[RMDB]
RNA sequence: GGGAACGACUCGAGUAGAGUCGAAAAAUGCGGUCCGUGAAGCAGCGGAUGGCUAUGGCGUCCCUGGCGAGCCAGUUCACGGUGAGCAAGGACCAGCUCACGCAGCUGAUGAUGUACAUGCUCCACGCCAUAGAGCUGCAUUCGUGCAGCUCUAUGGAAAAGAAACAACAACAACAAC
Reactivity to 2A3 in 0.01 (KOAc 150mM, MgCl2 10mM, bicine 150mM(pH8.5), 24C), signal-to-noise 2, nucleotides 027 to 126: a000u130g010c030g050g030u030c020c000g030u040g070a110a050g060c100a030g010c050g010g010a030u070g200g000c050u040a120u110g100g000c050g030u020c000c020c000u010g050g040c050g010a010g020c000c000a010g000u080u100c080a020c090g060g010u060g000a000g000c020a030a040g110g020a040c000c030a000g000c000u020c010a090c080g080c050a030g000c000u020g000a100u060g010a030u100g090u110a050c030a070u120g020c010u030c050c000a070c060g040
Reactivity to DMS in 0.01 (KOAc 150mM, MgCl2 10mM, bicine 150mM(pH8.5), 24C), signal-to-noise 3, nucleotides 027 to 126: a090u010g010c050g060g030u000c010c000g020u010g000a120a150g050c170a130g010c040g020g000a030u000g000g000c020u000a080u010g010g000c110g000u000c050c030c020u000g010g020c070g000a120g010c020c030a080g010u000u010c090a070c140g000g020u000g000a120g000c000a070a140g000g030a080c050c020a070g010c020u000c020a060c140g030c140a100g010c050u010g000a110u010g000a080u000g010u010a100c080a060u000g010c020u000c010c040a100c180g000
The data come from the RNA Mapping Database (RMDB), library OK2TRN.
This 177-nucleotide RNA was probed chemically with 2A3 and DMS.
2A3 adducts were read by reverse transcription with SuperScript II with manganese.
The reactions ran in a buffer of 150 mM KOAc, 10 mM MgCl2 and 150 mM bicine (pH 8.5), at 24 C.
High DMS reactivity at an A or C suggests that its Watson-Crick edge is free.
For DMS the reverse transcriptase was MarathonRT.